[RMDB]
Structure probing data (2A3 and DMS) for a 177-nucleotide construct.
High 2A3 reactivity points to a flexible backbone, as in loops and unpaired stretches.
For 2A3, 5,119 sequencing reads were counted.
Source: RMDB library OK1LIB, as collected in RNAgym.
Values cover nucleotides 27 to 126.
The DMS profile rests on 4,454 reads.
RNA sequence: GGGAACGACUCGAGUAGAGUCGAAAAGGUUAUGCCGAUAGCCCAGCGCGAAGCCAUACGCCGUCGUGUGGCGCGGCUGCGCGCGCAACGAGCCCAUGUGCUGACGGCGCGACGACGGGCACGACGGGGUCUAAGUCCAUUUCGAUGGACUUAGACCAAAAGAAACAACAACAACAAC
Reactivity to 2A3 in 0.01 (KOAc 150mM, MgCl2 10mM, bicine 150mM(pH8.5), 24C), signal-to-noise 6, nucleotides 027 to 126: g100g010u190u110a090u300g100c030c020g030a090u120a040g010c000c010c020a020g000c030g000c020g100a140a020g000c000c010a020u060a180c060g030c020c010g040u050c010g010u060g080u110g090g030c000g010c010g070g020c020u090g000c020g020c010g000c000g000c030a010a130c060g010a010g010c000c000c070a220u180g090u160g000c030u030g040a090c020g010g010c000g000c000g020a160c010g020a000c030g010g020g020c020a000c010g020a000c010g020g000
Reactivity to DMS in 0.01 (KOAc 150mM, MgCl2 10mM, bicine 150mM(pH8.5), 24C), signal-to-noise 3, nucleotides 027 to 126: g000g010u010u040a020u030g030c050c030g010a230u030a090g020c010c000c000a100g030c030g060c090g020a070a110g000c000c000a120u020a200c140g020c000c050g010u000c050g010u000g030u000g000g030c010g050c070g010g000c080u010g030c120g000c010g010c010g050c070a040a050c070g000a110g030c000c010c190a090u000g010u030g010c050u000g010a070c040g020g000c050g030c000g030a050c070g000a080c090g000g000g010c030a020c020g000a040c000g010g000